[RMDB]
The record gives the reactivity of an RNA of 177 nucleotides to 2A3 and DMS. Source: RMDB library M2PK50, as collected in RNAgym. For DMS, 9,401 sequencing reads were counted. For 2A3, 14,864 sequencing reads were counted.
RNA sequence: GGGAACGACUCGAGUAGAGUCGAAAAUGUGUCUCCUUCGGGAGACACAAACGCUCGCAGCCCGAGGCCGGACGGGCAAGGCAGCGGCCAGCCAGCGAGCUAUGUGUUAUCAAUUCGUUGAUAACAACAUGAUAGUACUCUUCGGAGUACUAUCAUGAAAAGAAACAACAACAACAAC
Reactivity to 2A3 in 0.01 (KOAc 150mM, MgCl2 10mM, bicine 150mM(pH8.5), 24C), signal-to-noise 5, nucleotides 027 to 126: u060g000u000g000u000c000u010c010c020u010u080c160g080g000g000a000g000a000c000a000c000a000a000a000c030g000c000u000c010g000c010a030g050c000c000c000g020a030g030g000c020c010g020g030a050c030g030g020g040c050a050a080g090g000c030a040g080c020g030g110c000c010a010g000c000c000a010g010c010g020a000g000c020u070a150u140g180u010g000u000u000a010u010c000a020a030u060u080c200g070u070u030g000a010u000a010a010c010a000a030
Reactivity to DMS in 0.01 (KOAc 150mM, MgCl2 10mM, bicine 150mM(pH8.5), 24C), signal-to-noise 6, nucleotides 027 to 126: u000g020u000g010u000c000u000c000c000u000u020c180g020g010g000a010g010a010c000a000c000a010a060a070c210g000c000u000c020g020c020a250g000c010c010c010g000a090g000g010c030c020g010g000a120c030g010g000g010c050a050a050g010g010c030a070g010c030g010g000c020c030a090g010c020c030a190g000c010g000a020g010c010u000a040u010g020u000g010u000u000a000u000c000a010a040u000u010c170g010u000u000g000a010u010a010a000c000a060a240